[RMDB]
RNA sequence: GGGAACGACUCGAGUAGAGUCGAAAACUUUAAAAUGUCUCGAGGGUGUCUCGGUGACCUUUAAGGUUGUUAUAGUGGAUGAGUCGCACUACAUAAAAUCAGGCACCGCUCAGCGAACUACAGCAACGUCGUUUUAGUAUUUCGAUACUAAAACGACAAAAGAAACAACAACAACAAC
Reactivity to 2A3 in 0.01 (KOAc 150mM, MgCl2 10mM, bicine 150mM(pH8.5), 24C), signal-to-noise 2, nucleotides 027 to 126: c010u190u150u110a050a100a030a090u150g030u020c050u050c110g010a000g010g010g010u040g010u000c020u050c070g070g050u040g030a010c030c000u020u300u260a230a060g000g010u020u000g050u000u180a100u010a040g000u010g070g080a110u090g090a100g120u010c050g110c120a020c010u020a010c000a020u070a040a160a010a060u060c020a000g010g000c000a010c020c020g110c030u000c000a010g030c000g000a020a010c000u200a100c060a040g090c030a070a020c060
Reactivity to DMS in 0.01 (KOAc 150mM, MgCl2 10mM, bicine 150mM(pH8.5), 24C), signal-to-noise 2, nucleotides 027 to 126: c050u010u010u000a050a030a100a150u000g020u000c000u020c100g030a010g010g010g020u010g020u010c010u030c090g020g020u000g000a030c010c060u000u010u010a060a070g010g000u000u000g000u010u010a130u010a000g010u010g020g000a160u000g000a110g020u000c110g000c030a040c040u000a030c130a060u000a050a050a090a060u010c040a030g000g000c000a020c040c040g020c030u000c040a090g000c010g000a070a090c060u010a050c100a100g020c110a120a110c180